[RMDB]
RNA sequence: GGGAACGACUCGAGUAGAGUCGAAAAACGCAUCAUACGUGAUGCGAGAACUACAGUUCCGCUCCUCUAGCACACAGAGGUCAAUUGGGUGCGACCACCCCCUCUCCCGUGGGUCAACGGGAACCAAAAAAGACCCUUUAGUUCGCUAAAGGGUCAAGCUACUUUAUUGCUUCGGCAAUAAAGUAGCAAAAGAAACAACAACAACAAC
Reactivity to 2A3 in 0.01 (KOAc 150mM, MgCl2 10mM, bicine 150mM(pH8.5), 24C), signal-to-noise 2, nucleotides 027 to 156: a010c000g020c000a000u000c010a060u080a140c120g110u080g030a060u080g010c030g000a040g040a040a030c140u230a120c050a060g010u020u000c000c050g020c040u050c030c010u000c020u010a040g100c110a010c020a000c010a070g030a020g000g070u030c030a000a130u120u050g080g000g000u040g040c060g040a090c050c010a070c060c000c020c010c010u050c010u030c000c000c010g000u010g000g010g040u110c060a000a020c000g010g000g050a000a000c020c010a050a000a000a120a000a000g000a000c000c000c000u000u000u000a020g010u040u020c060g000c150u000a000a000a050g000g000g000u000c000a000a000
Overview
An RNA of 207 nucleotides, treated with 2A3 and read out base by base. The reactions ran in a buffer of 150 mM KOAc, 10 mM MgCl2 and 150 mM bicine (pH 8.5), at 24 C.